[RMDB]
RNA sequence: GGGAACGACUCGAGUAGAGUCGAAAAACUUACUUACCACAAAUAUUUUCACAAUUUCACCUGAAACUUCAUGAGGAACACCGAUGGCAGCAGACUCUAGUACUCCCUCAUGCAUGGCCAGUACUUCUUCAAUUUCAUUGGGGUAAACAUUAAAACCGAUUUAAACGAAGUUCGCUUCGUUUAAAUCAAAAGAAACAACAACAACAAC
Reactivity to DMS in 0.01 (KOAc 150mM, MgCl2 10mM, bicine 150mM(pH8.5), 24C), signal-to-noise 2, nucleotides 027 to 156: a050c000u010u010a020c120u010u000a180c040c010a090c020a040a080a160u000a070u000u000u000u000c040a100c040a090a090u000u010u000c050a070c090c090u000g000a090a090a060c070u000u030c060a070u000g010a140g000g010a070a110c060a050c040c000g040a110u000g000g000c020a060g020c040a030g000a100c050u030c040u010a070g020u010a100c060u000c100c000c000u000c080a050u000g000c060a140u000g030g040c030c070a110g010u000a070c010u000u000c000u010u000c040a100a090u010u000u000c070a130u000u020g040g010g010g030u000a080a050a090c030a110u000u010a010a050a090a080c070c130
Reactivity to 2A3 in 0.01 (KOAc 150mM, MgCl2 10mM, bicine 150mM(pH8.5), 24C), signal-to-noise 4, nucleotides 027 to 156: a000c050u070u070a030c010u070u060a070c040c030a060c060a040a190a080u200a170u070u130u130u120c090a090c050a110a080u080u150u140c060a070c030c040u070g040a070a070a090c040u070u030c050a040u070g020a030g020g020a050a020c010a010c090c080g090a080u090g070g040c040a010g020c010a000g030a090c030u020c020u130a020g010u040a080c040u060c040c000c020u050c010a030u020g010c020a010u050g080g000c060c000a020g060u050a070c000u030u080c010u070u020c030a050a110u100u080u250c110a070u030u070g010g010g010g020u060a040a050a030c020a020u110u270a050a270a040a010c130c100